The record gives the reactivity of an RNA of 177 nucleotides to DMS and 2A3. The RNA was probed in 150 mM KOAc, 10 mM MgCl2 and 150 mM bicine (pH 8.5) at 24 C. DMS adducts were read by reverse transcription with MarathonRT. For DMS, 1,926 sequencing reads were counted. As a SHAPE reagent, 2A3 marks flexible, mostly unpaired nucleotides at the ribose 2'-OH. The 2A3 profile rests on 1,044 reads. It was measured as part of the RMDB library OK2TST.
[RMDB]
RNA sequence: GGGAACGACUCGAGUAGAGUCGAAAAAGCCGAGUGGUUCUACUCGUACGUUGACAAGCCGCUAUUCGAAUGCCGUGAUGAGUUUAUGAACCAUGUGAAUGAACUGGCACCCAGGCUGGGCACACGAGUAUUAGCCCACUUUCGAGUGGGCUAAUACAAAAGAAACAACAACAACAAC
Reactivity to DMS in 0.01 (KOAc 150mM, MgCl2 10mM, bicine 150mM(pH8.5), 24C), signal-to-noise 2, nucleotides 027 to 126: a070g000c030c020g020a140g010u010g000g000u020u000c000u000a040c030u010c000g010u000a050c050g000u000u010g020a140c140a070a100g020c050c040g010c140u020a200u010u010c100g000a050a050u000g010c030c010g000u010g010a040u000g000a040g010u000u020u010a030u000g030a080a040c030c030a010u000g000u010g010a090a100u000g000a040a060c050u010g000g020c020a120c020c030c020a090g000g010c070u000g010g010g000c030a030c090a060c100g010a150
Reactivity to 2A3 in 0.01 (KOAc 150mM, MgCl2 10mM, bicine 150mM(pH8.5), 24C), signal-to-noise 1, nucleotides 027 to 126: a010g060c030c040g000a000g030u070g000g000u030u000c000u010a000c000u000c020g020u050a040c020g030u050u190g040a100c030a100a010g020c030c010g030c070u170a120u120u190c010g060a080a020u150g030c030c020g000u040g040a150u050g010a020g040u060u100u080a160u160g020a020a010c020c010a030u040g030u020g110a120a150u070g000a060a010c070u050g000g040c030a010c030c040c000a000g050g020c010u060g030g060g020c040a030c000a000c070g110a030